[RMDB]
RNA sequence: GGGAACGACUCGAGUAGAGUCGAAAAGAUAUGGAUAGGGUACACAGCGAUGAAAUCGGAAACGAUGGAGCUGGUAUUUAUCCUAAGUCAAAACUAUAAAGAGCGUGUUCGCACGCUCUUUAUAGAAGACAUGUGAGGAGUUCGCUCCUCACAUGUCAAAAGAAACAACAACAACAAC
Reactivity to DMS in 0.01 (KOAc 150mM, MgCl2 10mM, bicine 150mM(pH8.5), 24C), signal-to-noise 1, nucleotides 027 to 126: g000a000u000a300u000g000g000a020u000a020g020g000g020u000a010c030a130c000a010g050c000g000a100u010g010a100a170a000u000c000g000g000a140a120a250c000g010a000u000g000g010a080g020c000u000g030g010u000a000u000u000u000a000u010c000c000u000a050a090g010u020c040a050a040a080a160c000u000a010u000a000a010a000g000a000g000c000g060u000g000u000u010c230g040c000a000c000g020c000u000c000u010u000u000a000u000a000g010a080a100
Reactivity to 2A3 in 0.01 (KOAc 150mM, MgCl2 10mM, bicine 150mM(pH8.5), 24C), signal-to-noise 1, nucleotides 027 to 126: g020a000u100a000u100g010g010a000u000a090g210g110g040u100a000c300a000c010a050g020c000g130a250u050g000a070a000a000u000c000g030g010a080a000a040c000g030a000u040g000g040a020g000c000u000g100g000u010a000u020u070u020a000u010c000c010u010a110a000g010u000c020a040a000a110a180c010u010a020u010a000a000a020g050a010g020c000g030u000g000u100u300c300g010c170a000c000g020c000u000c000u000u010u000a000u000a000g000a010a000
The record gives the reactivity of an RNA of 177 nucleotides to DMS and 2A3. For 2A3 the reverse transcriptase was SuperScript II with manganese. The RNA was probed in 150 mM KOAc, 10 mM MgCl2 and 150 mM bicine (pH 8.5) at 24 C.